[RMDB]
RNA sequence: GGGAACGACUCGAGUAGAGUCGAAAAGACCGAGAAUCAGCGGGUGCUGGAUUUCGCGGCCGCACUGGCUGAUUCGGAUUUCACCGCCGCCGGGCAGCUGCUGACCGCGUCGCAUGAGUCCAUGCGCCGCCUGUGUCAUAUUCGUAUGACACAGGCGAAAAGAAACAACAACAACAAC
Reactivity to 2A3 in 0.01 (KOAc 150mM, MgCl2 10mM, bicine 150mM(pH8.5), 24C), signal-to-noise 5, nucleotides 027 to 126: g080a010c020c020g020a040g040a090a050u010c010a010g010c030g080g000g020u020g000c050u250g030g080a120u120u130u120c100g010c080g090g010c000c000g000c020a000c010u030g210g000c000u000g010a000u010u000c000g000g000a010u030u060u090c110a110c030c000g020c020c000g010c010c010g010g020g000c010a020g020c010u100g020c030u050g040a070c020c010g020c040g040u050c010g000c020a020u040g030a010g110u020c080c000a010u050g000c010g000c020
Reactivity to DMS in 0.01 (KOAc 150mM, MgCl2 10mM, bicine 150mM(pH8.5), 24C), signal-to-noise 3, nucleotides 027 to 126: g020a150c020c000g000a110g020a020a010u000c010a000g020c000g000g000g020u010g000c000u100g050g000a060u010u010u010c110g040c130g000g000c040c040g020c040a020c000u010g010g000c010u000g000a010u010u000c020g000g050a120u010u000u000c070a120c060c000g020c020c010g020c050c030g000g000g000c030a090g000c040u000g000c050u000g010a110c030c020g000c110g050u000c020g000c020a020u010g010a160g020u030c130c030a040u000g010c040g040c090
This 177-nucleotide RNA was probed chemically with 2A3 and DMS. For 2A3, 5,026 sequencing reads were counted. 2A3 is a SHAPE reagent: it acylates the 2'-hydroxyl of flexible nucleotides of all four kinds. The DMS profile rests on 5,786 reads.